[RMDB]
RNA sequence: GGGAACGACUCGAGUAGAGUCGAAAAACAAAUCUCUCUCAGUGCGUACUACGUGUCAAGCACUGUGCAAGGAUGGGCAAGGUAGACGUUGCCCCCUGUAGACCCUCACAGUGUAGGGAGAUCCAGAGCCUCAGGGUAUAGGGAGAGACAGCCGCAAGCAUAAUACGUGAUUCGUCACGUAUUAUGCAAAAGAAACAACAACAACAAC
Reactivity to 2A3 in 0.01 (KOAc 150mM, MgCl2 10mM, bicine 150mM(pH8.5), 24C), signal-to-noise 7, nucleotides 027 to 156: a000c070a010a090a030u030c010u000c000u000c010u020c050a050g030u030g080c030g080u110a110c030u050a060c150g110u140g070u150c090a140a050g000c010a000c010u010g010u020g050c060a100a070g060g010a070u200g020g020g000c000a030a020g050g100u150a080g080a250c110g070u030u020g000c000c000c000c000c000u010g020u090a050g070a130c000c010c000u030c010a040c010a020g040u030g050u120a050g010g020g010a050g010a030u030c030c010a060g000a030g120c000c020u050c040a030g050g000g000u040a040u110a040g020g020g000a020g010a020g020a030c040a010g060c020c020g070c090a070a040
Reactivity to DMS in 0.01 (KOAc 150mM, MgCl2 10mM, bicine 150mM(pH8.5), 24C), signal-to-noise 2, nucleotides 027 to 156: a080c060a060a060a070u000c010u000c020u010c030u000c020a110g020u000g020c020g020u000a200c040u020a070c100g000u000g030u010c090a130a240g020c000a040c010u010g000u000g000c030a080a010g000g020a100u020g030g000g000c020a060a060g000g020u000a090g010a080c090g010u000u000g010c000c010c000c010c000u000g020u000a100g000a120c010c010c020u000c030a040c040a060g030u000g030u000a090g000g010g000a070g010a070u000c050c050a200g010a150g010c050c030u000c020a120g000g000g030u010a070u000a110g020g030g000a060g010a070g010a040c040a100g010c020c010g000c050a080a300